RNA sequence: GGGAACGACUCGAGUAGAGUCGAAAAACGGGCAGUGGCGAUGGCAACGCGGCAGCCGCAGGGUCGACUUCUUCGCAGCCGCAACAGACGGGAAACGGGCAAAGAGGGGCACUCGUUCUGUUGGAAGGCAGGUGGAUCCGUUCGCGGGUCCACCUGCAAAAGAAACAACAACAACAAC
Reactivity to 2A3 in 0.01 (KOAc 150mM, MgCl2 10mM, bicine 150mM(pH8.5), 24C), signal-to-noise 1, nucleotides 027 to 126: a000c050g000g000g100c030a090g030u070g080g050c000g020a090u020g030g000c020a020a050c050g020c000g110g000c000a030g000c000c000g020c010a020g020g040g010u070c010g030a100c020u090u010c010u080u040c010g080c080a040g000c020c020g080c000a000a000c000a020g190a000c030g000g010g000a000a290a040c020g070g010g000c100a120a090a000g130a080g000g000g000g000c040a000c000u000c000g000u090u000c070u000g010u000u000g000g090a130a060g070